This 177-nucleotide RNA was probed chemically with 2A3 and DMS.
RNA sequence: GGGAACGACUCGAGUAGAGUCGAAAAGUGCACGACUUCGGUCGUGCACAAAUAAAGGCAGUCGAGUGCGUACCGCACAGUCAUACGCUGACGCCACGACAAAAAGUAACGUCUUCGGACGUUACAACGUGUCAUCUUACUUCGGUAAGAUGACACGAAAAGAAACAACAACAACAAC
Reactivity to 2A3 in 0.01 (KOAc 150mM, MgCl2 10mM, bicine 150mM(pH8.5), 24C), signal-to-noise 3, nucleotides 027 to 126: g000u000g000c010a000c010g010a020c030u070u150c260g040g000u000c000g010u010g010c000a000c000a010a010a000u010a000a000a000g050g000c040a010g070u010c020g050a020g060u120g080c010g000u030a150c080c040g000c040a090c030a020g120u160c030a030u040a160c070g000c090u070g000a010c010g020c020c020a060c040g040a060c080a030a120a010a010a010g000u000a010a000c000g010u000c000u030u030c150g090g000a000c000g000u010u000a000c000a000a000
Reactivity to DMS in 0.01 (KOAc 150mM, MgCl2 10mM, bicine 150mM(pH8.5), 24C), signal-to-noise 2, nucleotides 027 to 126: g030u000g000c000a000c040g010a060c000u000u040c190g030g030u010c010g050u000g040c000a000c010a000a030a030u000a010a100a110g010g010c030a050g050u010c040g020a080g040u000g020c000g050u000a060c130c100g000c030a040c050a080g010u000c050a070u000a090c110g030c060u000g000a040c050g030c000c020a130c050g000a020c070a050a060a050a050a170g010u000a000a000c000g020u000c000u000u000c170g000g000a030c000g000u000u000a000c020a060a110
Background
For 2A3, 3,212 sequencing reads were counted. Conditions: 150 mM KOAc, 10 mM MgCl2 and 150 mM bicine (pH 8.5), 24 C.